[RMDB]
RNA sequence: GGGAACGACUCGAGUAGAGUCGAAAAGACGCCUGUGUGGCGAAGCGAGCAUGAGAUGGAGCCGCAAGAGAAGAUGAGAUAGAAGCGGCGCGAUAGCUUGCUCGCGAAAAGAUCCAUCUCACAGAGACAUAUCGGGAGCAUUCGUGCUCCCGAUAUGAAAAGAAACAACAACAACAAC
Reactivity to DMS in 0.01 (KOAc 150mM, MgCl2 10mM, bicine 150mM(pH8.5), 24C), signal-to-noise 3, nucleotides 027 to 126: g030a100c040g040c000c000u000g010u010g050u040g040g010c070g000a100a110g000c010g000a020g020c030a070u010g000a000g000a010u000g000g000a300g020c010c000g040c020a080a090g020a240g000a160a130g000a220u050g030a160g000a170u010a120g020a180a130g010c010g030g000c000g000c060g010a030u010a040g010c020u010u000g000c010u020c020g020c000g010a010a050a100a060g000a110u030c030c020a080u010c020u000c030a050c200a100g000a170g010a260
Reactivity to 2A3 in 0.01 (KOAc 150mM, MgCl2 10mM, bicine 150mM(pH8.5), 24C), signal-to-noise 3, nucleotides 027 to 126: g080a000c000g040c000c030u110g040u050g070u180g120g000c000g010a030a000g010c000g000a000g000c030a040u030g010a010g010a150u050g060g000a020g020c000c010g000c030a050a010g090a010g060a260a040g110a100u300g100a070g040a100u180a080g090a190a000g000c000g020g000c000g000c000g080a030u030a010g060c020u000u030g000c000u000c000g000c000g000a000a020a010a010g040a010u020c010c010a040u030c000u000c000a120c010a050g040a000g000a030